[RMDB]
Chemical mapping of a 177-nucleotide RNA with DMS and 2A3.
The data come from the RNA Mapping Database (RMDB), library TTRDEL.
The reactions ran in a buffer of 150 mM KOAc, 10 mM MgCl2 and 150 mM bicine (pH 8.5), at 24 C.
DMS adducts were read by reverse transcription with MarathonRT.
Values cover nucleotides 27 to 126.
RNA sequence: GGGAACGACUCGAGUAGAGUCGAAAAGAUAUGGAGAUAACAGCGAUAAGCUACCAUCGGAAACGAUGGAAUAGCUUUUGACGCUGGAAGCUCCUAAGUCAAAGCGUGCCCGUUCGCGGGCACGCAAUCUCUAACUUUACUUCGGUAAAGUUAGAGAAAAAGAAACAACAACAACAAC
Reactivity to DMS in 0.01 (KOAc 150mM, MgCl2 10mM, bicine 150mM(pH8.5), 24C), signal-to-noise 2, nucleotides 027 to 126: g000a050u000a290u000g010g010a010g000a010u000a150a290c010a010g000c000g000a100u000a020a020g000c000u000a030c010c010a010u000c000g010g010a090a090a120c010g010a020u000g000g000a060a080u000a020g020c000u000u000u000u000g010a130c070g000c000u000g000g000a060a120g000c000u000c000c000u010a040a100g010u000c010a060a110a130g000c000g030u000g000c000c000c000g010u000u010c160g010c060g010g010g000c000a000c000g020c010a020a010
Reactivity to 2A3 in 0.01 (KOAc 150mM, MgCl2 10mM, bicine 150mM(pH8.5), 24C), signal-to-noise 1, nucleotides 027 to 126: g040a000u110a040u160g030g010a000g010a010u100a290a020c000a000g000c020g070a090u030a230a000g020c000u040a030c010c000a000u010c020g010g000a120a070a030c000g010a000u030g030g000a080a080u040a010g000c000u000u040u070u200g220a080c020g020c000u020g010g020a010a050g010c000u000c010c000u000a080a010g020u010c030a100a120a080g000c000g020u000g000c140c080c000g000u070u070c300g000c000g130g030g000c030a000c010g000c000a010a020